[RMDB]
RNA sequence: GGGAACGACUCGAGUAGAGUCGAAAAGCUGACCAACUGCACCAGCGCCGAGGUUUUUCUCGACAUAGAUCACCUUGACGCCGUAACGCGCAGCCAGGGCAAUGCAUUUCUCCAGGUUCUCCUCAGCGAAGCCACCCUUCCAGCCGCCGAUGCUCACGAUUUGACGAAAUUUCGAUUUCGUCAAAUCAAAAGAAACAACAACAACAAC
Reactivity to 2A3 in 0.01 (KOAc 150mM, MgCl2 10mM, bicine 150mM(pH8.5), 24C), signal-to-noise 4, nucleotides 027 to 156: g020c020u010g050a080c000c020a070a090c030u040g030c010a030c050c030a050g010c010g000c030c000g020a020g020g030u060u080u020u160u060c050u050c090g150a130c070a090u300a010g030a030u040c000a000c000c000u010u020g030a030c020g020c030c020g070u090a150a030c050g020c020g000c060a010g030c000c060a090g010g010g050c020a050a040u140g000c040a050u000u080u060c070u010c010c010a060g010g010u060u050c030u010c040c010u050c060a030g030c050g050a040a010g020c010c000a040c010c010c000u040u050c020c010a010g020c000c040g040c030c020g070a040u140g000c040u040c040a040c050
Reactivity to DMS in 0.01 (KOAc 150mM, MgCl2 10mM, bicine 150mM(pH8.5), 24C), signal-to-noise 1, nucleotides 027 to 156: g030c040u000g000a090c010c010a100a140c070u020g000c010a080c040c040a040g070c010g000c000c000g020a030g020g010u000u000u000u000u000c030u010c060g020a140c200a120u010a080g010a050u000c150a050c000c000u000u010g010a030c000g000c040c050g010u000a090a100c130g070c060g000c010a090g010c000c030a040g020g030g010c040a090a080u020g020c060a140u000u000u000c050u010c000c040a100g010g040u000u000c030u020c020c010u000c040a070g000c040g030a080a130g020c040c000a100c030c030c040u010u010c040c030a140g030c040c010g000c020c000g000a050u000g010c010u000c030a160c300
This 207-nucleotide RNA was probed chemically with 2A3 and DMS. For 2A3, 2,627 sequencing reads were counted. For DMS, 2,124 sequencing reads were counted. Reactivities are given for positions 27 through 156. For 2A3 the reverse transcriptase was SuperScript II with manganese. The reactions ran in a buffer of 150 mM KOAc, 10 mM MgCl2 and 150 mM bicine (pH 8.5), at 24 C. For DMS the reverse transcriptase was MarathonRT.